[RMDB]
RNA sequence: GGGAACGACUCGAGUAGAGUCGAAAAGCCUUGCUCGGCCUCAACGAGCUCCAGCUCUACACCGAACACACCUUUGCGUAUCGGGGACACGAGCGGGUCUGGAAGGAUGCGGGCGCCUAUACCCCUGAGCUACCGAGAUAUUCGUAUCUCGGUAGCUAAAAGAAACAACAACAACAAC
Reactivity to DMS in 0.01 (KOAc 150mM, MgCl2 10mM, bicine 150mM(pH8.5), 24C), signal-to-noise 1, nucleotides 027 to 126: g010c000c050u050u010g040c010u010c050g000g000c070c020u000c090a090a130c070g000a040g010c040u000c040c050a170g020c000u020c010u000a150c190a110c010c000g000a060a060c020a020c090a090c200c230u000u000u000g020c050g000u010a160u000c000g020g000g020g030a110c170a060c190g010a030g010c020g020g020g020u000c040u000g040g030a080a050g000g000a060u000g010c120g000g000g010c020g000c090c070u020a120u000a210c000c000c000c060u000g000
Reactivity to 2A3 in 0.01 (KOAc 150mM, MgCl2 10mM, bicine 150mM(pH8.5), 24C), signal-to-noise 1, nucleotides 027 to 126: g020c000c000u000u080g000c000u010c030g110g080c000c020u040c030a050a050c100g060a020g010c020u030c020c010a000g000c000u040c030u050a050c100a060c020c000g030a080a000c040a000c000a030c090c130u220u300u300g030c060g060u100a160u160c010g000g000g000g190a010c060a010c190g010a030g010c000g000g030g000u000c030u050g070g080a130a030g070g010a030u120g290c060g020g000g020c020g090c000c000u130a160u080a140c010c000c000c000u000g110